This 207-nucleotide RNA was probed chemically with 2A3 and DMS.
RNA sequence: GGGAACGACUCGAGUAGAGUCGAAAACGAUCUGUUCGCAGAUCGAGCUACGGAGACGUAGCAAAGCGAGCGAGGGCACGGGCGCUCGCACUACCGGAAUUAGACCCAUAUCCACGUGUGCUAGGAUAUGGCCGUGCCCAAAGAAACAGCACACGAAAGUAGUGAUUUAUUUCGAUAAAUCACUACUAAAAGAAACAACAACAACAAC
Reactivity to 2A3 in 0.01 (KOAc 150mM, MgCl2 10mM, bicine 150mM(pH8.5), 24C), signal-to-noise 5, nucleotides 027 to 156: c010g000a000u000c000u010g060u090u110c280g000c090a000g010a010u000c000g010a030g000c000u000a000c000g020g020a080g020a060c010g000u010a000g000c000a030a070a000g000c000g000a000g000c010g000a020g000g000g020c000a000c010g020g020g010c050g010c010u010c000g020c010a020c020u080a080c000c020g050g050a120a090u130u080a140g050a080c020c000c000a000u000a010u010c020c020a050c140g010u000g000u000g000c010u020a030g000g010a000u010a000u020g010g000c000c000g000u000g000c000c000c000a060a120a000g060a020a090a020c060a010g000c010a000c000a000c010g010a120a150
Reactivity to DMS in 0.01 (KOAc 150mM, MgCl2 10mM, bicine 150mM(pH8.5), 24C), signal-to-noise 2, nucleotides 027 to 156: c010g000a020u000c010u030g040u000u000c270g040c050a010g000a020u000c000g020a100g020c000u000a000c000g030g010a300g000a300c040g120u000a010g000c050a050a030a100g010c010g000a030g030c000g030a090g030g000g000c000a020c030g000g030g010c040g000c020u010c000g000c000a030c040u000a300c050c080g040g000a090a120u010u000a100g000a120c110c000c000a080u000a040u000c010c010a040c040g020u030g030u000g000c020u000a240g000g000a040u010a010u020g010g050c010c010g020u000g020c000c000c100a020a080a080g010a240a090a120c110a050g030c010a020c010a020c030g000a110a090

Description: DMS adducts were read by reverse transcription with MarathonRT. Reactivities are given for positions 27 through 156. The DMS profile rests on 3,489 reads.